Annotation: Chemical mapping of a 177-nucleotide RNA with 2A3.
RNA sequence: GGGAACGACUCGAGUAGAGUCGAAAAUUAACGGCGCGAUUGACCGCGUCAUUGAGCGUCAGGUUGCCCGGCGCGGCGGCGCUGAGCGGCAACUCAGCGGCGGAGCCAUCCAGCGAAGGAAGCAUCUCAGGAAGCUGAAUUUCGAUUCAGCUUCCUGAAAAGAAACAACAACAACAAC
Reactivity to 2A3 in 0.01 (KOAc 150mM, MgCl2 10mM, bicine 150mM(pH8.5), 24C), signal-to-noise 2, nucleotides 027 to 126: u110u040a000a000c050g000g000c010g000c000g130a080u060u180g070a090c020c060g000c000g000u000c020a010u050u070g050a020g020c010g070u030c080a050g070g000u120u070g000c000c000c000g010g000c050g000c010g070g070c060g050g020c050g000c000u030g010a050g000c090g060g000c000a050a170c090u000c000a010g000c000g030g000c000g070g000a020g010c020c000a030u010c020c000a000g010c040g000a050a010g030g000a030a000g050c000a040u090c000u010

Background
It was measured as part of the RMDB library RFM100. Values cover nucleotides 27 to 126. 2A3 adducts were read by reverse transcription with SuperScript II with manganese.